[RMDB]
Chemical mapping of a 177-nucleotide RNA with DMS.
The RNA was probed in 150 mM KOAc, 10 mM MgCl2 and 150 mM bicine (pH 8.5) at 24 C.
RNA sequence: GGGAACGACUCGAGUAGAGUCGAAAAUACUACGCGGCCUCCCACCUCUCUGCCCGGAGCCGGCCGCCCCCCCAGAGACCCGGCCGGCUCCCACCGUCGCUUGGUCGACGACCCGCCGCGCCAACAAUCAUACAAUAUGCUUCGGCAUAUUGUAUGAAAAAGAAACAACAACAACAAC
Reactivity to DMS in 0.01 (KOAc 150mM, MgCl2 10mM, bicine 150mM(pH8.5), 24C), signal-to-noise 1, nucleotides 027 to 126: u000a110c080u010a090c040g000c030g000g030c000c050u000c020c020c020a190c100c060u000c050u040c050u010g030c030c060c050g030g000a040g040c020c020g000g010c010c020g010c040c010c000c010c000c000c020a140g050a090g000a040c090c090c060g020g000c000c000g000g020c010u000c010c000c050a060c120c040g050u000c030g000c010u000u020g040g020u010c000g010a040c010g010a080c050c060c020g010c040c020g020c050g020c050c090a020a080c110a050a080